[RMDB]
RNA sequence: GGGAACGACUCGAGUAGAGUCGAAAAAAUUAGAGGCAAUUUGAAAUAAUUUAAAUUUGCUCAACCCUACUGCACUUACCGAACUAGAUAACGGUGUAGUAGGGGUAAAUUCUCCGCAUUCGGUGCGCAACCACCUGAGGUUUCGACCUCAGGUGAAACUAUGCUUUCGGUUCGCCGAAAGCAUAGUAAAAGAAACAACAACAACAAC
Reactivity to 2A3 in 0.01 (KOAc 150mM, MgCl2 10mM, bicine 150mM(pH8.5), 24C), signal-to-noise 1, nucleotides 027 to 156: a000a000u210u080a080g000a070g080g030c000a000a000u020u030u010g060a110a130a060u260a030a220u200u090u090a070a090a050u120u060u060g010c000u000c030a000a030c000c000c010u000a000c000u000g000c000a000c000u010u030a030c020c000g020a060a040c040u050a110g050a140u110a150a070c080g000g000u000g000u000a000g000u000a000g030g000g050g000u000a000a010a000u030u000c050u000c000c010g000c000a010u030u010c000g150g000u030g000c030g010c030a050a000c030c000a000c070c020u000g000a030g030g000u000u060u240c160g080a050c030c010u000c000a000g010g000u000g000a010a000
Source information
An RNA of 207 nucleotides, treated with 2A3 and read out base by base. The 2A3 profile rests on 564 reads. For 2A3 the reverse transcriptase was SuperScript II with manganese. The data come from the RNA Mapping Database (RMDB), library M2RFPK. Conditions: 150 mM KOAc, 10 mM MgCl2 and 150 mM bicine (pH 8.5), 24 C.